[RMDB]
RNA sequence: GGGAACGACUCGAGUAGAGUCGAAAAGGUGAAACGAGCUCAAGUCUCUGACUUGUCUGUGGAGGAUGAUGAGGUUGCGGUGGAAACAAGGCUCUUUACUCAAUGGCUCUUUUCUUCCGAGGGAUAGCUCUACACUGAUAUUCGUAUCAGUGUAGAGAAAAGAAACAACAACAACAAC
Reactivity to 2A3 in 0.01 (KOAc 150mM, MgCl2 10mM, bicine 150mM(pH8.5), 24C), signal-to-noise 7, nucleotides 027 to 126: g020g000u060g020a040a030a050c060g010a030g010c030u030c080a030a030g020u000c060u030c090u250g030a040c010u030u050g030u050c040u060g090u090g040g040a040g030g020a060u070g010a030u060g020a050g050g020u090u080g030c040g000g040u050g030g050a040a060a030c050a050a030g030g010c000u000c000u070u090u030a060c050u050c040a050a080u070g010g000c000u010c000u070u070u040u010c020u100u030c010c010g020a060g030g040g030a060u080a070g020
Reactivity to DMS in 0.01 (KOAc 150mM, MgCl2 10mM, bicine 150mM(pH8.5), 24C), signal-to-noise 9, nucleotides 027 to 126: g010g010u010g010a060a060a080c100g010a060g010c070u000c050a040a050g000u000c020u010c170u010g010a060c030u000u000g000u000c080u000g020u000g000g010a090g000g000a070u000g010a080u000g010a080g010g010u000u000g010c080g010g010u000g010g010a090a060a080c140a060a090g010g010c020u000c060u000u000u000a070c090u000c090a050a080u010g000g000c030u000c010u000u000u000u000c040u000u000c040c020g010a100g000g000g010a130u010a100g010
This 177-nucleotide RNA was probed chemically with 2A3 and DMS. Reactivities are given for positions 27 through 126. For DMS, 31,331 sequencing reads were counted. DMS adducts were read by reverse transcription with MarathonRT. The RNA was probed in 150 mM KOAc, 10 mM MgCl2 and 150 mM bicine (pH 8.5) at 24 C.